[RMDB]
RNA sequence: GGGAACGACUCGAGUAGAGUCGAAAAGAAAAGAGCGUAAUCGCGUCUUGACGUGAGUGAGCCUAGACUGUAGUCUAUCCCAAGUGGGAUAGAAUAACUCACAAUACGCUGAUCUACAGUCAAAAGACCCUACUAAUCCAUUCGUGGAUUAGUAGGGAAAAGAAACAACAACAACAAC
Reactivity to 2A3 in 0.01 (KOAc 150mM, MgCl2 10mM, bicine 150mM(pH8.5), 24C), signal-to-noise 9, nucleotides 027 to 126: g180a010a090a000a000g040a000g000c000g000u010a030a050u060c010g000c010g020u010c100u140u230g110a020c000g000u010g010a010g000u000g000a000g010c010c030u040a050g000a010c000u000g000u000a000g010u000c000u000a000u000c000c000c020a080a110g300u300g060g000g000a000u000a000g010a020a030u060a030a000c000u000c000a000c000a000a020u020a010c010g000c010u010g010a020u020c000u000a000c000a000g000u010c010a000a010a000a050g140a040
Reactivity to DMS in 0.01 (KOAc 150mM, MgCl2 10mM, bicine 150mM(pH8.5), 24C), signal-to-noise 6, nucleotides 027 to 126: g010a120a080a090a040g010a040g000c000g010u000a040a300u010c020g000c000g000u000c050u040u000g010a030c010g020u010g000a050g010u010g010a010g020c300c090u010a060g010a010c000u010g000u000a010g000u020c000u000a010u000c000c000c000a290a190g030u050g000g000g000a010u020a000g000a050a080u020a070a090c010u000c000a000c000a100a170u010a010c010g020c010u000g000a080u040c000u000a020c000a000g000u010c010a110a060a110a100g010a160